Conditions: 150 mM KOAc, 10 mM MgCl2 and 150 mM bicine (pH 8.5), 24 C. This 177-nucleotide RNA was probed chemically with DMS and 2A3. High 2A3 reactivity points to a flexible backbone, as in loops and unpaired stretches.
RNA sequence: GGGAACGACUCGAGUAGAGUCGAAAAGAUAUGGAGAUGACAUGGGAGCUCAGGGUCGGAAACGACCCAGAAGAGCAUCGAUCAUGCAUCUCCUAAGUCAAAAGGGCUAUGGUUCGCCAUAGCCCAAUCAAUAGUCUUAGUUCGCUAAGACUAUUGAAAAAGAAACAACAACAACAAC
Reactivity to DMS in 0.01 (KOAc 150mM, MgCl2 10mM, bicine 150mM(pH8.5), 24C), signal-to-noise 9, nucleotides 027 to 126: g010a020u000a060u010g010g000a020g020a010u000g000a200c010a010u000g000g010g010a060g030c010u000c000a250g000g010g020u000c000g020g000a010a020a040c010g010a010c000c000c000a020g000a120a220g000a020g030c000a230u010c270g000a060u010c010a010u000g000c000a010u000c000u000c000c000u000a000a060g000u000c010a080a090a130a140g000g010g010c000u000a000u000g000g010u010u020c300g020c000c000a010u000a000g000c000c000c000a010a010
Reactivity to 2A3 in 0.01 (KOAc 150mM, MgCl2 10mM, bicine 150mM(pH8.5), 24C), signal-to-noise 5, nucleotides 027 to 126: g000a000u010a010u050g000g000a010g000a010u020g030a090c010a010u020g010g040g030a080g010c020u030c110a160g030g000g000u010c000g000g000a030a000a000c000g000a000c000c040c000a000g050a080a030g010a000g020c000a020u240c030g010a020u010c000a000u000g000c000a000u000c000u000c000c000u000a000a000g010u010c000a000a020a130a230g010g000g000c000u010a000u010g010g080u050u180c300g070c100c000a000u000a000g000c000c000c000a000a000